[RMDB]
RNA sequence: GGGAACGACUCGAGUAGAGUCGAAAAUGCUGCCGCGCUUACUCGCCUGCUCACCGCUACGCUUCUCGGCCUGCUCGCCGGAUCCCCAUGCGAAUGCCGGUCGCCAACGCGCUGAAGCGGGUGCGGGUCUUGGGAGACUGUUCGCAGUCUCCCAAGAAAAAGAAACAACAACAACAAC
Reactivity to 2A3 in 0.01 (KOAc 150mM, MgCl2 10mM, bicine 150mM(pH8.5), 24C), signal-to-noise 2, nucleotides 027 to 126: u110g000c000u010g020c000c010g020c000g020c030u020u040a060c020u020c030g050c000c010u020g020c000u020c020a230c010c020g000c010u030a020c020g000c010u030u040c080u010c000g030g000c000c010u020g000c010u010c010g000c000c030g040g050a130u040c020c000c020c010a080u130g020c020g010a110a030u090g030c010c000g010g010u000c010g020c010c010a080a050c090g020c000g010c100u120g050a070a010g010c000g020g000g000u050g000c000g010g010g020
Reactivity to DMS in 0.01 (KOAc 150mM, MgCl2 10mM, bicine 150mM(pH8.5), 24C), signal-to-noise 2, nucleotides 027 to 126: u050g000c020u000g010c000c010g010c010g020c050u000u020a090c050u020c050g000c030c010u010g000c050u010c070a090c040c020g040c050u000a100c060g020c010u020u030c130u000c020g020g000c040c010u000g010c020u000c060g040c170c180g010g010a160u010c000c000c010c060a150u000g000c020g000a060a040u050g000c040c020g000g000u000c020g020c120c090a060a070c140g000c030g060c300u010g000a140a070g040c040g000g020g010u000g000c030g000g000g000
An RNA of 177 nucleotides, treated with 2A3 and DMS and read out base by base.